[RMDB]
RNA sequence: GGGAACGACUCGAGUAGAGUCGAAAAAUUUGUUUAUAUUGUCUGUGACUAUUUUCAUCCUACAACAGCAGAAUUGAGUAGUUGCAACAGAGACCUUACAGCCCACAAAGUCUGACGUGUUUACUCUCUGGACUUUUACGGAUGAACAUGCUAAACAGAUCGUAUUUUACUUCGGUAAAAUACGAUCAAAAGAAACAACAACAACAAC
Reactivity to 2A3 in 0.01 (KOAc 150mM, MgCl2 10mM, bicine 150mM(pH8.5), 24C), signal-to-noise 2, nucleotides 027 to 156: a010u220u100u010g010u030u090u030a210u040a060u120u060g010u020c080u010g070u040g090a080c050u030a060u040u050u010u030c000a030u030c020c020u060a060c040a080a040c020a020g020c040a000g050a200a150u170u110g000a030g030u000a030g020u050u120g000c010a050a010c030a060g040a010g040a090c010c000u070u060a090c100a170g020c060c010c000a060c040a020a110a010g010u010c000u020g060a060c110g040u040g010u030u080u030a030c020u010c000u000c000u000g030g080a110c000u000u010u030u090a020c060g000g010a010u000g000a030a020c020a040u060g020c040u190a090a010a010c090a010
Reactivity to DMS in 0.01 (KOAc 150mM, MgCl2 10mM, bicine 150mM(pH8.5), 24C), signal-to-noise 1, nucleotides 027 to 156: a120u000u050u000g010u020u040u010a150u000a100u020u000g030u010c030u010g010u010g030a030c020u010a030u030u010u000u030c190a050u000c010c010u000a070c060a010a160c220a160g080c030a130g010a040a070u000u010g010a050g010u000a050g020u020u000g020c030a050a150c070a090g020a210g010a070c050c030u000u000a070c060a060g020c000c000c030a260c060a120a070a120g030u010c030u010g010a050c030g030u000g030u000u000u000a010c080u000c070u000c060u000g020g010a090c040u000u010u000u000a100c060g000g000a040u000g000a030a050c040a040u010g000c080u000a030a140a090c070a160